RNA sequence: GGGAACGACUCGAGUAGAGUCGAAAAAAUAUGAAUAAUGCUGCUGAAGAACAUUCAUGUACAAGUUAUCAUGUGGACAUGUUUUCAGUUGCUUUGGAUACCUAGGAGUAGAAUAGCUGGGUCAAAUAGUAACUCUGUAGGGAGGGGAACAUCACACGCACAGAUAAGGAUUCGUCCUUAUCUGUGCAAAAGAAACAACAACAACAAC
Reactivity to 2A3 in 0.01 (KOAc 150mM, MgCl2 10mM, bicine 150mM(pH8.5), 24C), signal-to-noise 3, nucleotides 027 to 156: a000a020u230a060u120g050a050a040u090a100a060u080g000c000u000g000c000u000g000a020a030g030a160a010c040a040u050u050c000a000u030g040u050a050c070a160a060g040u120u090a150u160c020a020u070g050u110g110g080a010c010a100u000g000u000u000u000u010c010a010g000u020u000g030c000u030u040u080g040g040a060u060a050c010c010u020a010g020g000a040g020u050a020g100a170a150u030a080g050c020u010g020g010g010u010c020a000a030a130u060a030g040u030a060a030c050u010c030u120g040u060a000g020g000g010a020g000g010g000g020a010a050c010a050u100c050a010c030a000c090
Reactivity to DMS in 0.01 (KOAc 150mM, MgCl2 10mM, bicine 150mM(pH8.5), 24C), signal-to-noise 1, nucleotides 027 to 156: a050a040u010a060u010g020a140a040u000a050a070u000g010c030u000g030c010u000g000a080a110g020a090a060c040a100u000u020c040a010u010g060u000a080c130a070a130g010u010u010a150u000c080a160u010g040u000g010g030a040c020a040u010g000u000u000u000u000c060a080g060u000u010g030c020u000u000u000g010g010a080u010a050c020c040u010a080g020g010a150g010u000a040g010a050a070u010a040g000c010u010g020g010g030u010c030a040a020a130u000a050g010u000a030a040c070u000c040u000g030u000a070g000g020g010a080g000g010g050g010a050a080c030a080u000c060a040c150a060c290